[RMDB]
RNA sequence: GGGAACGACUCGAGUAGAGUCGAAAAUUAACUAGCGUAGGGUACCAAGCAAAGAGGUAAGAAAUCCCACGGUAGAAGGCUUGGUUCGCGCCGGAGGAAGAAGAAGUCCCACUCCCUACGCCACAAAUCUAUCCUCCAUAUUCGUAUGGAGGAUAGAAAAAGAAACAACAACAACAAC
Reactivity to 2A3 in 0.01 (KOAc 150mM, MgCl2 10mM, bicine 150mM(pH8.5), 24C), signal-to-noise 3, nucleotides 027 to 126: u090u040a100a030c120u030a020g000c000g010u010a020g010g010g000u010a030c020c010a040a020g030c020a090a150a050g160a140g060g050u110a080a030g050a100a090a010u020c010c000c000a020c010g050g000u100a150g040a080a020g050g030c030u050u060g050g000u070u050c080g000c010g000c040c000g030g000a070g040g010a020a060g020a050a030g040a060a000g070u010c010c010c000a020c050u030c000c000c000u000a010c010g000c020c000a040c010a000a080a020
Reactivity to DMS in 0.01 (KOAc 150mM, MgCl2 10mM, bicine 150mM(pH8.5), 24C), signal-to-noise 4, nucleotides 027 to 126: u010u010a060a150c120u000a100g000c000g000u010a020g010g000g010u000a060c020c010a030a100g020c070a100a100a160g010a100g020g010u000a070a070g020a090a060a070u000c000c010c130a140c060g000g000u000a050g010a050a050g030g000c020u000u000g020g000u010u000c030g010c150g000c030c010g010g020a200g020g010a020a070g000a060a050g000a110a080g010u010c000c000c010a170c110u000c000c000c000u000a030c020g010c010c140a040c240a040a070a090